[RMDB]
RNA sequence: GGGAACGACUCGAGUAGAGUCGAAAAGAUAUGGAAGUGGAGGCCGACGAUCUAUGGCUAAUCUCGGAAACGAGACAACCAUAGGGAGGCUGACACUUCCUAAGUCAAACCCCUCUUCGGAGGGGAACACAAGUGAGAUGUUCGCAUCUCACUUGUGAAAAGAAACAACAACAACAAC
Reactivity to DMS in 0.01 (KOAc 150mM, MgCl2 10mM, bicine 150mM(pH8.5), 24C), signal-to-noise 2, nucleotides 027 to 126: g000a040u010a300u010g000g000a000a010g040u000g000g000a300g010g000c000c000g010a060c200g000a040u000c040u000a000u000g000g040c000u000a160a290u000c000u000c000g000g000a130a070a170c000g000a000g000a000c140a130a110c000c000a010u000a000g000g020g000a020g000g010c000u000g000a300c010a020c010u000u000c010c010u000a000a080g000u010c030a060a090a070c000c000c000c020u000c000u020u010c130g020g010a030g000g000g000g000a000a010
Reactivity to 2A3 in 0.01 (KOAc 150mM, MgCl2 10mM, bicine 150mM(pH8.5), 24C), signal-to-noise 1, nucleotides 027 to 126: g020a010u080a010u150g000g010a000a010g000u000g000g000a010g020g030c000c010g060a300c030g010a020u030c010u000a000u010g020g000c050u070a100a190u050c010u030c020g020g070a060a070a040c010g010a000g000a030c040a040a100c010c000a000u010a010g000g000g010a000g000g000c020u000g010a000c000a000c000u010u010c000c000u000a020a000g010u000c000a000a050a300c000c010c030c000u000c000u040u080c190g070g020a000g000g000g000g000a020a000